[RMDB]
Background:
The data come from the RNA Mapping Database (RMDB), library OK2TST. This 177-nucleotide RNA was probed chemically with DMS and 2A3. For DMS the reverse transcriptase was MarathonRT. The DMS profile rests on 3,348 reads.
RNA sequence: GGGAACGACUCGAGUAGAGUCGAAAACGGGACGAACGGCCGUCUGGCGCGUGGAUAGGGACACGCAUGUCGCGACACUCGUUCCGAUCAAGGUGCUGGCCUAUGAAAAAGAGCGCGUGAUCGUCGAGCACCAGUAUCAUUUCGAUGAUACUGGUGCAAAAGAAACAACAACAACAAC
Reactivity to DMS in 0.01 (KOAc 150mM, MgCl2 10mM, bicine 150mM(pH8.5), 24C), signal-to-noise 3, nucleotides 027 to 126: c060g010g000g000a070c020g000a070a110c150g010g020c050c030g020u000c070u000g020g000c080g000c010g010u010g000g010a200u000a080g000g000g010a130c040a040c030g020c060a100u000g010u000c040g010c050g000a040c020a080c080u000c020g010u000u000c010c010g000a260u000c060a040a050g000g020u000g010c140u010g020g000c030c020u000a080u000g000a030a050a100a130a110g000a030g010c000g020c060g010u000g000a090u010c030g020u010c050g010a110
Reactivity to 2A3 in 0.01 (KOAc 150mM, MgCl2 10mM, bicine 150mM(pH8.5), 24C), signal-to-noise 7, nucleotides 027 to 126: c020g020g010g020a010c030g020a140a040c070g080g040c060c020g030u020c030u050g080g010c030g000c010g010u010g020g030a070u110a120g060g000g030a020c010a010c030g020c020a050u150g040u050c020g000c010g030a010c010a010c030u010c010g010u020u000c010c000g000a020u010c020a020a020g030g030u090g120c110u160g180g030c020c010u210a300u170g080a040a030a000a020a010g040a010g010c020g000c010g020u010g050a240u020c000g080u050c030g020a020